[RMDB]
RNA sequence: GGGAACGACUCGAGUAGAGUCGAAAAUAUGGGCAGUUCGCUGCCCAUACGAGCGGAGUCGGGCACUAUGAGCCCGCAGCGUUGGUGCGUAGCCGCGGUGCAGAGACCAAGCCUUCGGGCUUGGUAAGACUUAGUGGUAGUUCGCUACCACUAAGUCAAAAGAAACAACAACAACAAC
Reactivity to DMS in 0.01 (KOAc 150mM, MgCl2 10mM, bicine 150mM(pH8.5), 24C), signal-to-noise 4, nucleotides 027 to 126: u000a000u010g000g010g030c000a020g010u000u000c220g020c010u000g010c010c010c000a000u000a000c070g000a130g010c060g010g010a090g000u000c020g010g000g020c020a110c110u000a120u000g010a170g010c000c010c030g020c030a050g000c050g020u000u020g040g010u010g010c120g010u000a150g000c010c020g020c030g000g010u000g010c070a130g010a170g000a030c000c010a000a010g000c000c000u000u010c190g040g000g020c010u000u010g000g010u000a000a060
Reactivity to 2A3 in 0.01 (KOAc 150mM, MgCl2 10mM, bicine 150mM(pH8.5), 24C), signal-to-noise 2, nucleotides 027 to 126: u060a010u010g010g000g020c000a010g010u050u070c120g070c110u000g020c000c010c030a000u010a010c000g020a020g030c040g020g060a060g040u130c010g010g020g000c030a020c090u190a140u300g090a020g000c000c000c000g020c000a000g010c010g040u070u260g090g030u090g040c060g030u100a020g000c000c000g000c010g020g040u070g000c060a030g060a000g020a160c000c000a010a000g000c000c010u040u100c240g060g010g000c010u000u000g000g000u000a020a010

Structure probing data (DMS and 2A3) for a 177-nucleotide construct. The reactions ran in a buffer of 150 mM KOAc, 10 mM MgCl2 and 150 mM bicine (pH 8.5), at 24 C. Values cover nucleotides 27 to 126. For DMS, 5,041 sequencing reads were counted. For 2A3, 3,657 sequencing reads were counted. 2A3 adducts were read by reverse transcription with SuperScript II with manganese.